[RMDB]
RNA sequence: GGGAACGACUCGAGUAGAGUCGAAAAGAUAUGGAGAGAUCUACCCACCGAAGUGGUAAUACUGUCGCAAAUCGGAAACGAUUUGAACUACGAUGGUAUUACCACUUCGAGGAUCUCUCCUAAGUCAGAAGAAGAAUCUGUUCGCAGAUUCUUCUUCAAAAGAAACAACAACAACAAC
Reactivity to DMS in 0.01 (KOAc 150mM, MgCl2 10mM, bicine 150mM(pH8.5), 24C), signal-to-noise 2, nucleotides 027 to 126: g020a150u060a270u010g000g020a020g010a010g000a000u000c010u010a090c010c020c010a300c110c000g000a020a000g020u000g010g010u010a000a050u000a010c000u010g010u010c000g010c010a000a010a000u000c000g020g000a130a110a300c030g020a000u000u000u000g010a150a030c190u020a300c000g000a000u000g010g000u000a010u010u010a000c010c000a000c000u000u010c000g000a020g000g010a000u010c010u000c020u000c000c020u000a000a050g010u000c170a120
Reactivity to 2A3 in 0.01 (KOAc 150mM, MgCl2 10mM, bicine 150mM(pH8.5), 24C), signal-to-noise 1, nucleotides 027 to 126: g140a060u300a170u300g010g000a010g010a000g000a030u000c020u100a300c070c080c000a000c000c000g030a000a010g000u010g010g000u010a000a010u020a000c000u000g020u010c000g010c060a000a040a000u000c020g030g050a120a070a080c030g010a030u000u030u000g040a110a080c130u230a010c280g000a000u020g000g000u000a010u000u000a000c010c020a000c010u000u000c010g020a000g000g000a000u000c020u000c000u000c000c040u010a040a000g090u090c120a010
Structure probing data (DMS and 2A3) for a 177-nucleotide construct. It was measured as part of the RMDB library TTRINS. For DMS the reverse transcriptase was MarathonRT.